[RMDB]
RNA sequence: GGGAACGACUCGAGUAGAGUCGAAAAGAUAUGGACGCAUACAGACAUGGCUUGAUUCGGAAACGAAUCUAGCCAACAGCUGUGAUGCGUCCUAAGUCAAAUCAAUUUUCCUUCGGGAAAAUUGAAACUAUAUUUUGACCUUCGGGUCAAAAUAUAGAAAAGAAACAACAACAACAAC
Reactivity to DMS in 0.01 (KOAc 150mM, MgCl2 10mM, bicine 150mM(pH8.5), 24C), signal-to-noise 1, nucleotides 027 to 126: g000a070u000a150u020g020g000a000c000g050c000a020u010a030c000a010g000a150c110a240u010g010g000c000u000u020g000a030u000u000c000g040g010a070a060a090c000g010a010a000u000c000u000a000g030c010c000a000a030c260a210g010c000u010g000u000g010a010u000g000c000g020u000c000c000u000a020a030g000u020c010a130a120a220u000c010a000a010u000u000u000u000c000c000u000u020c220g030g020g000a010a000a010a000u000u000g010a010a120a170
Record summary:
Source: RMDB library TTRDES, as collected in RNAgym. An RNA of 177 nucleotides, treated with DMS and read out base by base.